[RMDB]
Chemical mapping of a 177-nucleotide RNA with DMS and 2A3. The 2A3 profile rests on 1,351 reads. For 2A3 the reverse transcriptase was SuperScript II with manganese. Source: RMDB library OK2TRN, as collected in RNAgym. The DMS profile rests on 2,825 reads.
RNA sequence: GGGAACGACUCGAGUAGAGUCGAAAAGUGAAUGGGCAGCGCCUGGUUCUGGCAGCGGAUGCAGCCAUUGCAGAUGCUUUGAAAGUGGGAGAGGCGACGCGGCUGCGGAUGGCAACCGAUGAGCACGACAGUCAAGGAGUUUCGACUCCUUGACUGUAAAAGAAACAACAACAACAAC
Reactivity to DMS in 0.01 (KOAc 150mM, MgCl2 10mM, bicine 150mM(pH8.5), 24C), signal-to-noise 3, nucleotides 027 to 126: g000u000g010a080a080u000g000g000g000c040a080g010c070g000c050c010u000g030g020u000u000c040u010g020g010c050a040g020c040g010g000a210u010g020c040a060g020c060c080a090u000u000g010c050a040g010a220u010g000c030u010u000u020g000a070a060a080g020u010g010g010g000a140g020a090g010g020c030g020a120c140g010c090g020g020c020u000g000c060g000g010a100u010g010g000c020a050a060c050c030g000a080u000g000a110g000c080a070c120g010
Reactivity to 2A3 in 0.01 (KOAc 150mM, MgCl2 10mM, bicine 150mM(pH8.5), 24C), signal-to-noise 1, nucleotides 027 to 126: g120u070g040a140a090u100g040g020g030c040a000g040c030g020c040c010u080g050g000u120u030c030u080g040g000c010a000g000c000g040g050a000u140g010c000a000g050c050c030a060u160u020g000c010a000g040a080u090g030c000u100u130u150g200a140a090a030g050u140g030g000g010a080g010a000g050g060c020g010a020c050g000c020g030g010c010u050g000c020g050g040a100u090g040g000c050a040a010c020c000g040a120u090g040a030g010c080a020c070g020